[RMDB]
An RNA of 177 nucleotides, treated with 2A3 and read out base by base. Conditions: 150 mM KOAc, 10 mM MgCl2 and 150 mM bicine (pH 8.5), 24 C. For 2A3, 2,219 sequencing reads were counted. Values are in units of 0.01, from 0 to 300, in steps of 10. The data come from the RNA Mapping Database (RMDB), library M2PK50.

RNA sequence: GGGAACGACUCGAGUAGAGUCGAAAAUCCAUAAGGUUCGCCUUAUGGAAAAUGCGGCCAGCUCCAGGCCGCAAAAAUAAAUGGAGCACAAGACGAAAGUCAAAACAGUACUCUUCGGAGUACUGAAGGUUCCAUACUAGUUCGCUAGUAUGGAACCAAAAGAAACAACAACAACAAC
Reactivity to 2A3 in 0.01 (KOAc 150mM, MgCl2 10mM, bicine 150mM(pH8.5), 24C), signal-to-noise 1, nucleotides 027 to 126: u020c000c000a000u000a010a000g050g020u020u200c220g060c060c000u010u000a000u000g010g010a030a040a030a030u230g060c000g000g020c030c020a040g000c000u000c000c000a010g000g020c000c000g000c010a050a050a000a020a000u010a000a000a020u000g000g000a000g020c030a020c030a000a020g010a000c010g010a070a030a030g010u010c000a040a040a000a030c000a000g010u000a010c010u030c000u000u180c280g080g000a000g000u000a000c000u000g010a050a010